[RMDB]
RNA sequence: GGGAACGACUCGAGUAGAGUCGAAAAGAUAUGGAGUCCGUUUCGAGGGACCCACUCGGAAACGAGUGGGAGAACCUACCCACCGAAACGACUCCUAAGUCAAAACAGCUGCGUUCGCGCAGCUGAACCUAGACGAACAGUUCGCUGUUCGUCUAGGAAAAGAAACAACAACAACAAC
Reactivity to 2A3 in 0.01 (KOAc 150mM, MgCl2 10mM, bicine 150mM(pH8.5), 24C), signal-to-noise 1, nucleotides 027 to 126: g000a040u060a030u170g010g030a020g040u080c200c110g010u060u000u030c050g000a110g010g020g060a130c010c000c000a020c020u000c010g020g000a110a060a070c010g000a020g000u030g000g020g010a020g000a020a070c010c000u090a160c040c020c020a100c190c020g000a000a000a000c000g010a000c000u000c000c000u000a060a020g000u000c050a000a010a130a230c010a020g020c000u000g010c000g030u090u080c300g000c000g000c130a000g040c000u000g010a000a000
Reactivity to DMS in 0.01 (KOAc 150mM, MgCl2 10mM, bicine 150mM(pH8.5), 24C), signal-to-noise 1, nucleotides 027 to 126: g000a110u020a300u010g020g000a000g000u000c130c090g030u000u000u000c020g040a140g000g010g000a080c010c000c010a040c000u000c030g000g010a160a100a150c000g000a020g000u000g010g000g000a100g000a050a030c260c110u000a140c060c020c050a300c130c000g000a000a000a000c000g000a010c000u000c040c000u000a000a080g000u000c020a080a070a110a150c010a010g030c000u000g020c000g070u000u010c180g010c010g040c000a010g020c000u000g000a050a040